[RMDB]
RNA sequence: GGGAACGACUCGAGUAGAGUCGAAAAGAGGACGUUUUACCACGCAUCCCAACCCGAAUGUCGGGUGCGUCAUUGUCAAAGAUGGCGAAAUUGUCGGUGAAGGUUACCACCAACGUGCGGGUGAACCGUUCACUUUUUCGUUCGCGAAAAAGUGAACAAAAGAAACAACAACAACAAC
Reactivity to DMS in 0.01 (KOAc 150mM, MgCl2 10mM, bicine 150mM(pH8.5), 24C), signal-to-noise 3, nucleotides 027 to 126: g010a120g000g000a030c050g020u000u000u010u010a040c040c010a150c020g040c010a080u000c050c020c030a160a080c000c010c000g020a240a120u010g040u000c030g020g000g000u000g030c030g020u000c020a010u000u010g020u010c300a090a120a200g000a010u000g010g000c000g000a050a070a080u010u000g010u000c040g010g020u010g000a150a090g010g000u030u000a090c150c020a040c030c010a000a010c050g040u000g010c000g000g000g000u000g000a040a040c020c080
Reactivity to 2A3 in 0.01 (KOAc 150mM, MgCl2 10mM, bicine 150mM(pH8.5), 24C), signal-to-noise 2, nucleotides 027 to 126: g130a000g040g040a020c020g020u010u000u020u040a030c000c020a300c050g010c010a030u000c000c020c000a000a000c010c010c020g080a200a150u300g170u300c050g000g000g020u010g030c000g020u050c000a010u030u010g050u060c010a010a050a050g040a030u000g010g000c020g000a060a050a000u110u080g080u050c030g040g000u020g060a120a050g180g060u150u140a100c080c010a000c010c000a010a020c040g040u020g000c020g000g000g010u020g010a010a000c020c000